[RMDB]
RNA sequence: GGGAACGACUCGAGUAGAGUCGAAAAGAUCUGAUGCAGUGUCGUCUGGCAGGUGUCAGCUUGAAGCGCUGGGCUGUGUGUGGAAGUACUUGCACGAUGAGUACGCUGCACCAGAUGAUCAGGCAUGCGCUGAAUCAACGUUCGCGUUGGUUUAGCGAAAAGAAACAACAACAACAAC
Reactivity to 2A3 in 0.01 (KOAc 150mM, MgCl2 10mM, bicine 150mM(pH8.5), 24C), signal-to-noise 9, nucleotides 027 to 126: g080a030u000c000u010g000a010u010g000c000a000g020u000g020u040c010g010u000c020u050g030g000c000a010g020g000u020g040u030c010a000g000c000u040u050g070a060a000g030c010g000c010u020g000g030g000c010u010g030u010g010u010g020u050g090g060a070a020g020u040a010c000u000u000g000c020a010c050g030a040u040g000a000g030u030a010c010g000c000u000g000c000a000c000c000a000g000a010u020g000a040u050c030a010g060g000c040a030u080g010
Reactivity to DMS in 0.01 (KOAc 150mM, MgCl2 10mM, bicine 150mM(pH8.5), 24C), signal-to-noise 9, nucleotides 027 to 126: g010a040u000c010u000g000a040u000g010c010a020g010u010g010u010c020g020u010c010u000g000g010c020a040g000g010u000g010u020c040a040g000c010u000u020g010a160a120g010c100g000c020u010g000g010g010c010u000g010u010g020u010g020u010g000g000a080a090g020u020a020c000u000u000g000c030a060c080g000a040u010g000a140g020u030a100c050g010c000u010g000c000a010c020c000a010g000a020u000g010a090u020c060a060g010g010c100a080u030g010
About this RNA
The data come from the RNA Mapping Database (RMDB), library OK1LIB. Structure probing data (2A3 and DMS) for a 177-nucleotide construct. DMS adducts were read by reverse transcription with MarathonRT. The RNA was probed in 150 mM KOAc, 10 mM MgCl2 and 150 mM bicine (pH 8.5) at 24 C. Values cover nucleotides 27 to 126.